Notes:
The record gives the reactivity of an RNA of 177 nucleotides to DMS and 2A3. For DMS, 2,624 sequencing reads were counted. The reactions ran in a buffer of 150 mM KOAc, 10 mM MgCl2 and 150 mM bicine (pH 8.5), at 24 C. The 2A3 profile rests on 1,562 reads. 2A3 adducts were read by reverse transcription with SuperScript II with manganese. In probing experiments dimethyl sulfate is read out at A N1 and C N3, which are open when not base-paired.
RNA sequence: GGGAACGACUCGAGUAGAGUCGAAAAUGGGACACCCUCUCUCCUUACCUUUUAUGGGCAUUAUCCAUCUAUUCCGGAGGCCUAUCAACCCUUCUCUGCCUCUUCUUCAUGUGCCGACCUGCUAGAGACAACUUAUCACGUUCGCGUGAUAAGUUGUAAAAGAAACAACAACAACAAC
Reactivity to DMS in 0.01 (KOAc 150mM, MgCl2 10mM, bicine 150mM(pH8.5), 24C), signal-to-noise 2, nucleotides 027 to 126: u000g000g000g000a100c110a120c060c020c010u000c020u010c040u010c000c010u030u010a090c050c020u020u010u020u010a100u000g010g010g020c100a090u010u000a090u000c050c020a070u010c080u000a130u000u000c090c050g010g030a150g000g000c020c050u000a060u010c080a040a110c070c010c020u000u000c020u000c010u000g020c000c030u000c020u030u000c040u000u010c040a080u000g010u010g010c050c030g000a100c040c000u000g000c060u020a120g000a130g010
Reactivity to 2A3 in 0.01 (KOAc 150mM, MgCl2 10mM, bicine 150mM(pH8.5), 24C), signal-to-noise 1, nucleotides 027 to 126: u090g060g000g010a030c020a040c030c000c020u000c010u000c020u000c000c010u040u050a080c000c000u000u080u030u200a120u160g010g010g000c020a090u010u150a050u130c000c050a030u070c030u150a160u170u040c010c000g030g050a040g040g000c010c000u050a060u050c030a020a090c010c000c000u040u040c040u010c010u030g070c020c020u050c030u030u020c020u040u040c030a050u090g020u030g120c040c010g020a040c010c010u030g040c000u050a040g000a010g000